[RMDB]
RNA sequence: GGGAACGACUCGAGUAGAGUCGAAAAAAGGCGCUGGCGGCGGCAUCGAUCCUGAUACCGGGGAAGAUAUCAUCCCUGGCGAGUUGAUGACGACGAUUAAGGGCGCGAUUAGGGAUAUCAAGGAUCGUGACAUUAACGGCGAGACAAUCCUUGCUGGAAGCCCAUAUAGGUUCGCCUAUAUGGGCUUAAAAGAAACAACAACAACAAC
Reactivity to DMS in 0.01 (KOAc 150mM, MgCl2 10mM, bicine 150mM(pH8.5), 24C), signal-to-noise 1, nucleotides 027 to 156: a060a050g020g020c020g050c020u000g050g010c050g010g040c000g000g000c000a000u010c030g010a030u000c180c040u030g000a200u010a000c010c000g050g000g020g000a080a090g000a120u000a020u010c080a110u000c010c010c000u010g000g020c000g010a030g020u000u010g010a030u010g010a090c000g000a050c010g000a210u000u000a130a070g000g000g020c030g000c060g020a170u000u000a090g010g020g010a150u020a020u000c060a180a090g020g030a050u000c050g000u010g000a130c060a100u000u010a090a130c080g000g000c000g000a190g040a080c030a090a070u000c040c000u020u010g040c010u000g000g040
An RNA of 207 nucleotides, treated with DMS and read out base by base.
For DMS the reverse transcriptase was MarathonRT.
Values are in units of 0.01, from 0 to 300, in steps of 10.
It was measured as part of the RMDB library OK3TST.
In probing experiments dimethyl sulfate is read out at A N1 and C N3, which are open when not base-paired.
The RNA was probed in 150 mM KOAc, 10 mM MgCl2 and 150 mM bicine (pH 8.5) at 24 C.